RNA sequence: GGGAACGACUCGAGUAGAGUCGAAAAGACACGCCAAGAUUCCACUGGGAUUACCCGAUGAACCGGAACCGAGGACUCUCAGAGCAUUCCCUCUAGUUAUGACUGAGGGCCCUGGGGGUAAGGGCAGCAUACGGUCCUCAUUCGUGAGGACCGUAUGAAAAGAAACAACAACAACAAC
Reactivity to DMS in 0.01 (KOAc 150mM, MgCl2 10mM, bicine 150mM(pH8.5), 24C), signal-to-noise 5, nucleotides 027 to 126: g010a130c080a060c070g010c010c020a090a080g000a100u000u000c000c030a080c100u010g020g000g000a150u000u020a070c010c020c020g000a130u020g000a150a140c040c030g000g010a130a160c040c010g010a110g000g000a040c020u000c000u000c020a020g000a080g000c080a100u030u000c050c010c050u020c110u040a070g010u010u010a050u030g020a090c030u030g000a010g000g000g000c120c020c020u010g030g000g020g000g000u010a150a130g000g020g050c100a110g010
Reactivity to 2A3 in 0.01 (KOAc 150mM, MgCl2 10mM, bicine 150mM(pH8.5), 24C), signal-to-noise 7, nucleotides 027 to 126: g050a010c030a020c070g050c020c020a060a040g050a080u070u040c010c020a090c150u100g020g000g050a100u080u120a110c000c000c030g060a090u130g060a070a050c030c030g020g030a020a020c010c020g030a050g050g010a020c000u000c000u000c010a010g020a030g070c020a040u100u130c010c060c000u030c060u110a040g040u120u070a080u180g090a060c040u010g010a010g000g010g000c010c000c000u070g030g010g000g000g010u050a030a050g020g000g000c000a010g030